[RMDB]
RNA sequence: GGGAACGACUCGAGUAGAGUCGAAAACGUCCGAUGCGGAAGUUCGUGCUUCCGUCGAACGCGAAAGUCGGACGGCGGCCAUGAGUCGCAACGCAAAGCCACGGCAAGUGGAGUUAGCGAGAAGAGAAAAAGUCACGAGUGUUCGCACUCGUGACAAGAAACCAGAUACGUUCGCGUAUCUGGUUUCAAAAGAAACAACAACAACAAC
Reactivity to 2A3 in 0.01 (KOAc 150mM, MgCl2 10mM, bicine 150mM(pH8.5), 24C), signal-to-noise 2, nucleotides 027 to 156: c020g000u000c000c000g000a020u010g010c000g010g000a030a000g030u170u300c150g070u300g090c010u030u000c000c000g020u000c000g050a070a000c090g010c020g070a130a050a000g020u010c010g010g000a000c010g030g000c020g010g030c000c000a220u250g020a030g050u010c020g000c030a030a060c020g010c020a080a040a000g030c000c010a020c010g090g020c300a290a090g010u010g030g040a040g070u090u090a050g000c010g010a040g040a120a090g030a040g070a050a070a000a000a020g020u000c000a000c000g000a000g000u020g000u050u080c150g010c090a010c000u000c000g000u000g000a000c000a010a000
Reactivity to DMS in 0.01 (KOAc 150mM, MgCl2 10mM, bicine 150mM(pH8.5), 24C), signal-to-noise 1, nucleotides 027 to 156: c030g020u030c000c010g000a050u000g000c030g020g000a060a060g000u000u000c120g000u020g020c000u000u000c010c010g060u000c030g010a070a110c070g000c040g070a030a080a150g030u000c000g020g030a020c080g020g010c000g000g000c000c020a150u000g000a300g080u000c000g020c010a040a040c030g000c000a050a160a240g000c000c000a040c000g040g070c210a140a300g000u000g010g000a140g000u000u000a160g000c000g010a120g020a080a140g000a040g020a070a060a090a090a260g000u000c000a000c000g030a040g020u000g040u000u010c300g020c020a100c000u000c000g080u000g010a000c000a030a060